The record gives the reactivity of an RNA of 177 nucleotides to 2A3 and DMS. For DMS, 2,407 sequencing reads were counted. Reactivities are rounded to 0.1 and cut off at 0 and 3. Source: RMDB library M2PK90, as collected in RNAgym. For DMS the reverse transcriptase was MarathonRT. For 2A3 the reverse transcriptase was SuperScript II with manganese.

RNA sequence: GGGAACGACUCGAGUAGAGUCGAAAAAAAAACAAUAGCGAUAACAAUAACCGUAACAAUAACGCUAACAAUAACAAGCGCAAUAACGGUAACAAUGGCGGUAAGAAGCGCAAUCCGCCAAAAAAAAGUAACAUAGUAGAUUCGUCUACUAUGUUACAAAAGAAACAACAACAACAAC
Reactivity to 2A3 in 0.01 (KOAc 150mM, MgCl2 10mM, bicine 150mM(pH8.5), 24C), signal-to-noise 1, nucleotides 027 to 126: a020a000a000a020a050c090a050a050u080a040g030c020g110a090u090a170a040c090a100a080u060a120a000c030c000g010u040a000a000c040a030a150u080a110a010c010g000c000u020a040a000c070a120a050u220a110a020c060a090a040g030c000g030c000a050a020u100a060a020c010g010g000u020a050a000c020a020a150u100g000g000c020g000g020u010a010a020g050a060a000g000c010g000c020a000a020u000c000c010g050c050c010a000a000a000a000a000a040a000a000
Reactivity to DMS in 0.01 (KOAc 150mM, MgCl2 10mM, bicine 150mM(pH8.5), 24C), signal-to-noise 2, nucleotides 027 to 126: a010a020a100a020a100c090a040a060u000a020g020c000g000a070u000a050a040c100a110a030u000a070a080c000c030g000u000a080a050c150a060a010u000a100a050c010g010c010u000a100a090c070a060a030u050a020a100c220a100a060g000c020g000c030a100a030u000a020a020c030g000g020u000a040a090c150a040a150u000g000g020c000g000g020u010a100a100g000a010a050g030c030g020c020a130a100u000c020c000g010c010c000a000a000a000a020a020a050a030a170